[RMDB]
RNA sequence: GGGAACGACUCGAGUAGAGUCGAAAAGUGCCAAGGCCUCCAGGGACAUCGCCAGUGACGUGAGUACCUUCCAUCUAACUCUCUGUGGUCUCCACUGUGCUGAACAACCCAGAGGGUGGCUGGUGAACCACACACUCUAUAGUGAUUUCCACAUGUAGACGUAUACGCUAUUCGUAGCGUAUACGUCAAAAGAAACAACAACAACAAC
Reactivity to 2A3 in 0.01 (KOAc 150mM, MgCl2 10mM, bicine 150mM(pH8.5), 24C), signal-to-noise 4, nucleotides 027 to 156: g070u070g040c040c010a070a030g120g010c010c010u030c060c010a030g020g000g010a050c040a060u040c020g030c000c000a010g000u000g030a070c170g090u070g010a050g070u120a120c030c000u100u080c010c030a090u070c050u090a090a140c020u020c000u000c010u100g070u160g130g010u000c010u040c030c010a050c060u120g070u150g160c130u080g050a060a040c010a040a030c000c000c000a010g020a020g030g000g020u020g030g000c000u010g000g020u050g060a040a030c010c000a010c000a000c010a000c060u020c020u070a090u090a150g040u040g070a080u040u020u040c040c000a040c010a070u170g050u100a020
Reactivity to DMS in 0.01 (KOAc 150mM, MgCl2 10mM, bicine 150mM(pH8.5), 24C), signal-to-noise 2, nucleotides 027 to 156: g040u000g040c050c010a130a090g000g010c030c010u000c030c070a110g020g010g020a140c100a100u000c030g030c010c050a120g030u010g010a120c090g060u000g020a150g000u000a040c040c040u000u010c040c050a060u000c100u010a120a100c030u000c020u000c020u000g000u010g010g000u020c010u010c050c010a120c060u000g000u010g010c070u000g020a050a100c060a080a110c000c000c000a080g010a040g030g040g040u000g010g050c050u000g010g030u000g010a110a160c010c010a050c010a050c040a010c030u000c070u010a140u000a110g030u000g000a110u000u000u010c000c040a090c140a080u000g030u000a190
Source: RMDB library OK3TST, as collected in RNAgym. Chemical mapping of a 207-nucleotide RNA with 2A3 and DMS. For 2A3 the reverse transcriptase was SuperScript II with manganese. Reactivities are given for positions 27 through 156. Conditions: 150 mM KOAc, 10 mM MgCl2 and 150 mM bicine (pH 8.5), 24 C. The DMS profile rests on 2,954 reads.